Conditions: 150 mM KOAc, 10 mM MgCl2 and 150 mM bicine (pH 8.5), 24 C.
This 177-nucleotide RNA was probed chemically with DMS and 2A3.
For DMS, 5,399 sequencing reads were counted.
As a SHAPE reagent, 2A3 marks flexible, mostly unpaired nucleotides at the ribose 2'-OH.
[RMDB]
RNA sequence: GGGAACGACUCGAGUAGAGUCGAAAAGAUAUGGAGUUGGAACUACAAAUCCGAGAGCUAUGAAGUCGGAAACGAUGGAGCUCAAGGAUUUGCCAACUCCUAAGUCAAACAGGUGUUCGCACCUGAAGUAUUAAGAGGAGUUCGCUCCUCUUAAUACAAAAGAAACAACAACAACAAC
Reactivity to DMS in 0.01 (KOAc 150mM, MgCl2 10mM, bicine 150mM(pH8.5), 24C), signal-to-noise 5, nucleotides 027 to 126: g000a030u000a300u000g000g000a010g020u000u000g010g000a110a030c060u020a300c000a000a010a020u000c000c000g000a300g010a030g020c000u000a140u010g020a100a220g000u010c010g000g000a120a060a140c010g010a020u000g000g000a000g010c010u000c000a020a260g000g000a010u000u000u000g000c000c000a000a010c000u000c010c000u000a010a090g000u000c030a090a130a190c020a010g000g020u000g000u010u040c230g020c010a020c000c000u000g000a040a100
Reactivity to 2A3 in 0.01 (KOAc 150mM, MgCl2 10mM, bicine 150mM(pH8.5), 24C), signal-to-noise 5, nucleotides 027 to 126: g020a030u070a040u130g000g000a000g000u010u010g050g000a050a050c080u140a040c300a020a000a000u010c010c000g000a010g000a000g000c000u030a110u300g020a040a000g010u010c000g020g030a110a030a020c000g000a000u020g010g030a000g010c010u000c010a000a000g000g000a000u000u000u010g000c000c000a010a000c000u000c000c000u000a000a010g000u010c020a000a060a130c020a010g000g000u010g060u140u180c240g030c120a000c000c000u000g020a120a020